About this RNA: Chemical mapping of a 207-nucleotide RNA with DMS and 2A3. The reactions ran in a buffer of 150 mM KOAc, 10 mM MgCl2 and 150 mM bicine (pH 8.5), at 24 C. The data come from the RNA Mapping Database (RMDB), library M2RFPK. 2A3 adducts were read by reverse transcription with SuperScript II with manganese.
RNA sequence: GGGAACGACUCGAGUAGAGUCGAAAAGUAUAAAAUCUGCAAGUAGUGCUAUUGUUGGAAUCACCGUACCUAUUUAGGUUUACGCUUCAAGAUCGGUGGAUAGCAGCCCUAUCAAUAUCUAGGAGAAAAAACCCAGGACUGUUCGCAGUCCUGGGAAGGAUAAUUAGAAGUUCGCUUCUAAUUAUCCAAAAGAAACAACAACAACAAC
Reactivity to DMS in 0.01 (KOAc 150mM, MgCl2 10mM, bicine 150mM(pH8.5), 24C), signal-to-noise 1, nucleotides 027 to 156: g010u000a160u000a090a080a100a070u000c010u010g000c040a100a120g000u000a090g000u020g020c010u020a020u000u000g000u040u030g000g030a100a040u010c010a070c050c000g000u000a060c020c010u000a130u000u030u010a010g020g010u000u000u000a050c070g000c030u010u010c050a080a060g020a060u000c030g010g020u000g010g020a050u000a070g020c060a130g000c110c060c010u000a100u000c060a060a110u010a050u000c090u010a080g020g010a110g000a010a070a100a140a060a140c010c000c000a000g000g030a020c000u000g000u010u000c300g010c020a000g010u010c000c000u030g000g030g000a000a010
Reactivity to 2A3 in 0.01 (KOAc 150mM, MgCl2 10mM, bicine 150mM(pH8.5), 24C), signal-to-noise 3, nucleotides 027 to 156: g030u020a070u060a230a070a050a130u100c100u120g050c040a070a070g050u100a010g060u060g050c040u030a040u070u120g080u050u110g040g060a060a050u060c010a010c010c000g020u030a010c000c010u040a110u240u190u200a020g000g010u020u040u050a020c040g000c020u020u020c020a030a010g000a060u060c010g000g030u020g070g000a020u030a010g040c050a010g010c020c000c010u050a070u090c050a110a020u040a020u230c060u050a030g010g040a050g000a020a120a030a030a030a050c000c010c000a000g000g000a000c000u010g020u060u080c150g000c090a000g000u000c000c000u000g010g010g000a000a000